[RMDB]
RNA sequence: GGGAACGACUCGAGUAGAGUCGAAAAACACAUACGGCGCGGAAGGCGUGUUUGCUGACGUUUCCAUUCCCUUGUUUCAAUCAUUGGUUAAUCCCUUGAUUCCUUUGGGGAUUUUUGGGUUAAACUGCCUUAUGAAUCAGUUCGCUGAUUCAUAAGGAAAAGAAACAACAACAACAAC
Reactivity to DMS in 0.01 (KOAc 150mM, MgCl2 10mM, bicine 150mM(pH8.5), 24C), signal-to-noise 2, nucleotides 027 to 126: a070c060a060c090a070u000a070c060g020g010c070g010c010g010g020a110a140g000g000c020g020u000g010u000u010u010g020c060u010g010a230c060g000u000u010u000c020c030a280u000u000c010c000c010u010u000g020u000u000u000c040a080a120u010c190a120u020u000g000g000u010u000a030a020u010c010c000c010u000u000g000a010u000u000c010c000u000u010u010g030g000g010g000a010u010u000u000u000u000g000g010g000u000u000a030a020a040c020u000g000
Reactivity to 2A3 in 0.01 (KOAc 150mM, MgCl2 10mM, bicine 150mM(pH8.5), 24C), signal-to-noise 3, nucleotides 027 to 126: a000c050a000c000a020u120a120c040g050g020c020g030c020g100g140a120a020g120g000c010g010u060g130u050u080u100g050c070u030g040a040c020g020u010u030u040c020c000a010u020u050c010c020c000u020u050g040u030u010u020c060a090a110u080c070a120u040u140g020g000u020u020a030a050u100c000c000c000u010u010g010a000u030u000c010c020u100u110u300g070g020g000g020a020u030u020u010u020u050g020g000g000u000u030a060a040a010c010u020g030